[RMDB]
RNA sequence: GGGAACGACUCGAGUAGAGUCGAAAAUUCAAGAUAGCGAUCUUUUCGCUGAACAAGCUCCGUGGGUUUAAGAAGAAGGUCGUAAUGUUCGAAACUAAGAUCAUCAUGGACGCGGACGACAACAUCUUGGGGAUGCUCUUCCGUGACCGCAUAGGCACAGGCAGUAACUUUUCGAAGUUACUGCCUGAAAAGAAACAACAACAACAAC
Reactivity to DMS in 0.01 (KOAc 150mM, MgCl2 10mM, bicine 150mM(pH8.5), 24C), signal-to-noise 1, nucleotides 027 to 156: u000u000c040a140a200g070a090u000a120g000c000g020a020u000c080u000u000u010u010c000g050c010u000g010a100a090c040a080a170g000c010u020c050c090g000u010g020g020g030u000u020u020a020a070g030a020a040g000a030a040g020g070u000c010g000u010a080a020u010g000u000u010c040g020a140a030a190c070u000a040a190g030a060u000c110a110u010c070a090u000g020g000a220c020g010c010g010g060a100c070g030a300c000a030a050c010a020u000c000u010u000g000g030g040g000a060u010g000c030u000c030u000u000c010c000g000u000g020a190c000c020g000c130a080u010a090g020g040c040a180
Reactivity to 2A3 in 0.01 (KOAc 150mM, MgCl2 10mM, bicine 150mM(pH8.5), 24C), signal-to-noise 2, nucleotides 027 to 156: u050u030c040a000a060g020a050u140a020g030c010g040a050u050c100u040u110u020u040c010g030c050u020g000a010a020c080a040a000g000c040u030c040c030g020u130g000g030g040u080u100u050a050a040g030a040a020g040a030a000g010g050u000c020g040u080a120a080u110g050u090u050c090g040a060a080a060c100u060a110a010g020a150u130c030a010u030c010a020u150g000g000a020c000g020c010g010g000a010c010g000a000c020a110a000c000a060u000c010u080u170g070g010g060g000a000u010g000c030u010c000u020u030c060c000g010u020g030a030c000c000g040c100a110u130a140g050g000c060a000

The record gives the reactivity of an RNA of 207 nucleotides to DMS and 2A3.
For DMS the reverse transcriptase was MarathonRT.
The data come from the RNA Mapping Database (RMDB), library OK3TST.